[RMDB]
RNA sequence: GGGAACGACUCGAGUAGAGUCGAAAAAGGAGUUGGAUGAUCUUCUGUUUAACCCCUUCCUCUAGAGUAGCACCAAUCUUGAUUUCUCGCUUGUUUUCCUCGGUACCUAUGUUGAUAAGCUCAAUCUAUACACUUACGUCUUCGGACGUAAGUGUAUAAAAGAAACAACAACAACAAC
Reactivity to 2A3 in 0.01 (KOAc 150mM, MgCl2 10mM, bicine 150mM(pH8.5), 24C), signal-to-noise 2, nucleotides 027 to 126: a000g020g060a020g000u060u040g150g050a080u150g150a110u130c020u120u020c010u030g120u060u150u120a080a080c000c030c010c020u020u000c020c000u060c070u030a110g000a030g100u030a010g020c030a020c040c020a030a010u010c030u040u050g020a050u080u070u050c020u030c000g020c090u090u090g000u000u150u020u000c010c010u000c000g020g000u020a020c000c000u030a050u140g000u000u000g030a150u050a190a030g060c000u010c060a100a030u010c040u010
Reactivity to DMS in 0.01 (KOAc 150mM, MgCl2 10mM, bicine 150mM(pH8.5), 24C), signal-to-noise 3, nucleotides 027 to 126: a050g000g000a100g010u020u000g030g000a090u010g010a110u010c050u000u000c030u000g000u000u010u010a130a210c050c020c020c000u010u000c010c000u010c060u010a040g010a060g000u000a070g010c050a090c020c040a030a130u020c000u000u000g000a090u010u010u000c040u000c040g010c090u020u020g000u000u000u000u000c000c010u010c020g000g000u010a090c060c000u020a070u020g030u000u000g010a050u020a130a090g030c110u010c050a080a090u000c100u000
Structure probing data (2A3 and DMS) for a 177-nucleotide construct. For 2A3, 648 sequencing reads were counted. 2A3 adducts were read by reverse transcription with SuperScript II with manganese. Values are in units of 0.01, from 0 to 300, in steps of 10. The reactions ran in a buffer of 150 mM KOAc, 10 mM MgCl2 and 150 mM bicine (pH 8.5), at 24 C.